[RMDB]
RNA sequence: GGGAACGACUCGAGUAGAGUCGAAAAGAAAGAUUUUAUUUAGUAUUCUUCCAUCAGUGUUCAUAAGGGAUGUUGGUCUGUAGUUUUCUUAUAGUGUGGCUUGCUUAGAGCAAAGGUGGUUCCCUAAAAGAAAUAUGACAUUCGUGUCAUAUUUCUUAAAAGAAACAACAACAACAAC
Reactivity to DMS in 0.01 (KOAc 150mM, MgCl2 10mM, bicine 150mM(pH8.5), 24C), signal-to-noise 7, nucleotides 027 to 126: g010a120a080a110g000a080u020u020u010u040a070u020u030u010a110g010u010a080u010u000c020u000u000c020c010a050u020c040a060g030u000g000u010u000c040a080u000a090a080g000g010g000a060u010g010u000u000g010g000u020c050u000g010u000a050g000u020u010u020u020c060u010u010a070u020a080g010u010g010u010g000g000c030u000u010g000c040u000u000a050g000a080g000c030a030a050a070g000g020u000g000g010u000u000c000c000c010u010a050a060
Reactivity to 2A3 in 0.01 (KOAc 150mM, MgCl2 10mM, bicine 150mM(pH8.5), 24C), signal-to-noise 8, nucleotides 027 to 126: g030a010a060a010g050a050u120u110u130u140a220u130u220u180a080g030u060a090u040u020c020u050u010c020c000a030u020c020a060g040u020g010u060u040c060a110u080a100a060g060g010g040a060u080g040u050u030g080g080u020c020u010g040u030a050g020u020u050u110u040c040u050u090a080u040a120g050u070g020u050g110g010c020u020u050g020c000u030u050a020g000a010g040c020a030a030a020g020g000u020g000g000u000u000c000c000c000u060a120a130